This 177-nucleotide RNA was probed chemically with 2A3 and DMS.
RNA sequence: GGGAACGACUCGAGUAGAGUCGAAAAGAAUGUGUGUAAACCGUGUGGCACACAAUGGCUAUUCAGGAAUCGUUCUGAGGCAACAGGUAAAAUGGAAGAAAGCCAAAUCCUUAGCACACGGAAGAAACCCACCUAUACUAUUCGUAGUAUAGGUGGGAAAAGAAACAACAACAACAAC
Reactivity to 2A3 in 0.01 (KOAc 150mM, MgCl2 10mM, bicine 150mM(pH8.5), 24C), signal-to-noise 8, nucleotides 027 to 126: g160a060a070u070g000u000g000u000g000u010a100a090a060c000c000g000u000g010u010g000g000c000a000c000a000c000a010a030u030g000g000c010u070a210u160u050c010a010g090g080a080a140u070c040g110u140u030c050u080g100a090g130g070c060a100a050c010a060g030g050u120a130a100a050a060u100g090g020a040a060g050a140a110a000g010c000c000a050a010a030u030c020c010u060u090a050g020c000a000c000a000c010g010g020a010a010g050a010a040a010
Reactivity to DMS in 0.01 (KOAc 150mM, MgCl2 10mM, bicine 150mM(pH8.5), 24C), signal-to-noise 5, nucleotides 027 to 126: g020a100a080u010g010u000g020u000g000u010a090a060a070c010c000g010u010g020u000g000g000c010a020c000a000c000a060a170u000g000g000c020u000a140u020u020c000a090g010g020a090a130u020c090g000u010u010c010u010g000a090g010g000c130a060a100c060a080g010g000u020a020a030a100a050u020g000g000a070a090g000a040a040a070g000c010c000a020a050a090u010c000c020u020u030a060g020c000a000c000a000c000g000g000a180a070g000a060a090a060